Structure probing data (2A3) for a 207-nucleotide construct.
For 2A3 the reverse transcriptase was SuperScript II with manganese.
It was measured as part of the RMDB library M2RFOK.
The RNA was probed in 150 mM KOAc, 10 mM MgCl2 and 150 mM bicine (pH 8.5) at 24 C.
RNA sequence: GGGAACGACUCGAGUAGAGUCGAAAAGCGGGGCUUGAAACGCGGGUAGCGCGCACGCCCGGCGAAGAAGUUCGCAUACGCGGUGUGCUGGUGCCGAAGUGUCUGCUGCAACGACACGCUCGACACCUAGAACAUACCGUAUUCGUACGGUAUGUAAGCGAACUUUGGAGUUCGCUCCAAAGUUCGCAAAAGAAACAACAACAACAAC
Reactivity to 2A3 in 0.01 (KOAc 150mM, MgCl2 10mM, bicine 150mM(pH8.5), 24C), signal-to-noise 1, nucleotides 027 to 156: g000c010g010g030g000g040c090u080u040g020a100a090a050c080g000c000g050g020g030u070a020g050c030g000c010g000c040a000c000g000c000c000c050g000g000c020g000a010a000g080a030a040g080u060u050c000g000c010a050u020a210c100g020c090g050g040u010g000u020g010c020u050g020g080u040g020c000c010g000a010a000g000u010g030u030c030u050g050c040u150g040c040a050a010c040g010a010c000a000c010g050c100u000c010g000a000c000a020c010c010u060a020g050a190a000c000a000u000a020c000c000g000u000a040u030u170c180g030u010a010c000g000g010u000a000u000g000u030a060a030